[RMDB]
RNA sequence: GGGAACGACUCGAGUAGAGUCGAAAACGUGCUCUCUUCGGAGAGCACGAAAGAAAGCACAAAGCACCAAAUAAAGGAGGUGCACGGUGCAACCACCAAUAAAAAGAAGUAGGUUCGCCUACUUCAACUGUACGAUAAGGUUCGCCUUAUCGUACAGAAAAGAAACAACAACAACAAC
Reactivity to DMS in 0.01 (KOAc 150mM, MgCl2 10mM, bicine 150mM(pH8.5), 24C), signal-to-noise 2, nucleotides 027 to 126: c010g010u000g000c000u000c010u000c000u000u000c110g110g000a060g000a000g040c010a000c000g010a030a090a170g000a070a130a170g020c000a000c000a120a220a160g000c000a020c000c000a130a100a130u040a080a110a070g000g000a300g000g010u000g050c020a070c230g090g020u000g000c000a070a100c100c050a280c110c080a070a100u020a040a030a030a060a130g000a000a000g010u010a020g000g000u000u000c150g000c020c000u000a000c000u000u020c020a010a020
Reactivity to 2A3 in 0.01 (KOAc 150mM, MgCl2 10mM, bicine 150mM(pH8.5), 24C), signal-to-noise 3, nucleotides 027 to 126: c000g000u000g010c000u010c010u000c010u050u040c180g080g000a000g010a000g010c000a000c000g000a000a010a000g010a000a010a000g000c010a010c010a030a190a050g000c010a010c010c020a090a080a080u300a080a180a060g100g020a090g040g000u000g000c000a000c070g060g000u020g000c010a030a030c000c040a020c010c030a050a090u210a170a130a010a010a010g020a000a010g000u010a000g030g020u020u060c250g040c040c000u000a010c000u000u000c000a000a010
Structure probing data (DMS and 2A3) for a 177-nucleotide construct. DMS adducts were read by reverse transcription with MarathonRT. 2A3 is a SHAPE reagent: it acylates the 2'-hydroxyl of flexible nucleotides of all four kinds. For 2A3, 3,422 sequencing reads were counted.